Chemical mapping of a 177-nucleotide RNA with 2A3 and DMS.
It was measured as part of the RMDB library TTRDEL.
The reactions ran in a buffer of 150 mM KOAc, 10 mM MgCl2 and 150 mM bicine (pH 8.5), at 24 C.
RNA sequence: GGGAACGACUCGAGUAGAGUCGAAAAGAUAUGGAUCGUUUGGAGCUAGGAUCGGAAACGAUCUAAUAGCGUUGAAAAAUGCGAUCCUAAGUCAAAACUCACCCACCCGUUCGCGGGUGGGUGAGAAGUAGUACACAAAGUUCGCUUUGUGUACUACAAAAGAAACAACAACAACAAC
Reactivity to 2A3 in 0.01 (KOAc 150mM, MgCl2 10mM, bicine 150mM(pH8.5), 24C), signal-to-noise 3, nucleotides 027 to 126: g010a000u010a000u030g010g000a000u000c000g040u000u000u020g030g000a020g010c010u000a020g020g030a010u010c000g010g010a010a010a000c000g000a010u020c000u020a050a070u050a030g000c020g060u170u050g010a010a010a010a020a020u190g110c090g010a000u010c000c000u000a000a000g000u000c010a010a010a030a260c000u010c000a010c040c010c000a010c060c020c010g050u100u080c300g010c060g240g010g020u020g000g010g010u000g000a000g000a000a000
Reactivity to DMS in 0.01 (KOAc 150mM, MgCl2 10mM, bicine 150mM(pH8.5), 24C), signal-to-noise 3, nucleotides 027 to 126: g000a020u000a020u010g000g000a000u000c000g000u000u010u000g000g010a020g010c000u000a140g010g000a010u000c000g020g000a010a010a020c000g010a010u000c000u000a080a130u000a020g010c010g000u000u010g010a020a100a010a010a020u010g020c100g010a000u000c000c000u010a000a090g000u000c020a110a090a120a200c000u000c000a000c000c000c000a000c000c000c010g030u000u010c230g030c020g010g010g020u000g000g000g000u000g000a000g010a010a070